[RMDB]
RNA sequence: GGGAACGACUCGAGUAGAGUCGAAAACGGGGUUGGCUAUAGUUGAUUUCGAACCGUAUGCUUAUGUAUAUGGAAUGAUUUGUACGCUUUACGCAUGUGUACACUCACUCUCAGUUCACUCUUGUGAGAGAAGGGAGAGAGAGAUAUUUUGCGAUUAGUAAUGGUGGAUCUUCGGAUUCGUCAUUGCAAAAGAAACAACAACAACAAC
Reactivity to DMS in 0.01 (KOAc 150mM, MgCl2 10mM, bicine 150mM(pH8.5), 24C), signal-to-noise 2, nucleotides 027 to 156: c040g010g000g040g020u000u000g000g010c050u010a150u000a090g010u010u000g000a210u000u010u000c020g010a070a230c020c010g070u000a020u000g010c030u000u000a100u000g050u000a030u000a040u010g000g030a070a100u010g000a120u010u000u000g030u000a080c090g030c050u000u000u000a170c060g000c040a030u030g040u000g010u000a030c030a150c070u000c000a210c010u000c000u000c000a060g000u000u010c020a090c020u000c030u010u000g060u000g000a090g030a080g010a060a120g010g000g020a040g020a050g010a060g010a030g020a100u000a040u000u010u000u010g000c020g020a200u000u010a130
Reactivity to 2A3 in 0.01 (KOAc 150mM, MgCl2 10mM, bicine 150mM(pH8.5), 24C), signal-to-noise 3, nucleotides 027 to 156: c040g010g000g000g000u040u020g010g010c010u030a010u010a100g010u020u010g030a150u030u040u040c040g010a050a020c020c010g000u010a010u020g000c030u160u050a060u230g010u000a000u000a000u050g000g020a080a050u050g020a060u070u040u100g000u000a000c020g000c010u050u050u040a030c010g000c000a010u010g010u000g000u010a000c020a000c010u000c010a020c000u010c000u010c000a060g010u020u050c010a020c040u030c010u100u200g040u150g090a030g000a000g000a040a040g070g000g010a010g000a000g000a000g010a000g010a020u020a060u130u130u070u060g010c000g030a010u020u070a030

Notes: Chemical mapping of a 207-nucleotide RNA with DMS and 2A3.